[RMDB]
RNA sequence: GGGAACGACUCGAGUAGAGUCGAAAAGAUAUGGAGCACUUGAAAGCGAAGAACCCAGAGUUAGCCGAGGUGUAUCGGAAACGAUACAUACAGCUAACUCUGGGGGAGCUUGAGUGCUCCUAAGUCAUCAUCAAAGAUCGUUCGCGAUCUUUGAUGAAAAAGAAACAACAACAACAAC
Reactivity to DMS in 0.01 (KOAc 150mM, MgCl2 10mM, bicine 150mM(pH8.5), 24C), signal-to-noise 2, nucleotides 027 to 126: g030a080u000a300u020g000g010a000g020c000a020c000u000u020g000a150a030a030g010c000g000a110a190g010a170a300c020c000c000a000g000a030g010u000u000a000g000c000c000g020a300g000g010u000g010u010a000u010c000g010g000a110a050a210c000g010a000u000a010c000a010u000a000c000a040g010c000u000a010a020c000u000c000u000g000g000g020g000g000a070g000c000u010u010g000a060g010u000g020c010u010c000c000u000a020a010g000u000c040a200
Reactivity to 2A3 in 0.01 (KOAc 150mM, MgCl2 10mM, bicine 150mM(pH8.5), 24C), signal-to-noise 1, nucleotides 027 to 126: g000a000u080a070u240g010g020a000g030c010a000c020u100u150g300a300a040a040g030c080g250a300a040g030a050a030c000c000c020a040g000a000g000u000u000a010g000c000c010g080a050g080g000u030g010u000a000u040c000g000g000a020a100a090c020g010a010u010a000c000a010u030a010c000a000g020c010u000a000a000c000u000c000u000g010g030g000g020g010a000g060c030u030u010g000a000g000u000g030c000u000c000c000u000a000a000g000u000c000a060
An RNA of 177 nucleotides, treated with DMS and 2A3 and read out base by base. For DMS, 1,861 sequencing reads were counted. Values cover nucleotides 27 to 126. High DMS reactivity at an A or C suggests that its Watson-Crick edge is free.